Source: RMDB library M2PK50, as collected in RNAgym. Chemical mapping of a 177-nucleotide RNA with 2A3 and DMS. DMS adducts were read by reverse transcription with MarathonRT. The DMS profile rests on 587 reads. The RNA was probed in 150 mM KOAc, 10 mM MgCl2 and 150 mM bicine (pH 8.5) at 24 C.
[RMDB]
RNA sequence: GGGAACGACUCGAGUAGAGUCGAAAACAUCCAGUGUUCGCACUGGAUGAGAGGAAUGUGGAUCGGCAAACUACAUACCAAAAGCUGAGCUCGUAAGAGCAACGAUUUCGUCGUUCGCGACGAAAAAGACGUGUUGGCUAUUCGUAGCCAACACGUCAAAAGAAACAACAACAACAAC
Reactivity to 2A3 in 0.01 (KOAc 150mM, MgCl2 10mM, bicine 150mM(pH8.5), 24C), signal-to-noise 2, nucleotides 027 to 126: c000a020u000c010c000a000g000u020g030u050u100c220g040c110a000c000u000g010g000a000u000g000a030g000a010g000g070a070a070u060g020u030g060g070a120u090c140g170g000c110a120a080a010c020u030a010c000a040u060a080c020c000a090a020a030a020g000c090u070g040a020g010c010u000c000g040u110a110a030g000a020g050c020a000a060c050g080a090u000u030u030c000g000u000c000g000u020u050c210g000c000g050a010c030g000a020a010a010a000a010
Reactivity to DMS in 0.01 (KOAc 150mM, MgCl2 10mM, bicine 150mM(pH8.5), 24C), signal-to-noise 1, nucleotides 027 to 126: c000a000u000c000c000a030g000u000g020u000u050c220g060c000a000c000u000g030g000a000u010g080a090g000a200g000g000a000a030u000g000u030g000g030a150u000c070g030g000c230a110a150a010c020u000a000c020a040u000a230c080c040a060a020a100a050g000c050u000g000a160g000c000u000c030g000u020a170a090g000a040g000c000a010a030c090g000a130u000u000u000c000g010u000c000g000u000u010c260g020c040g040a010c000g010a000a000a120a140a040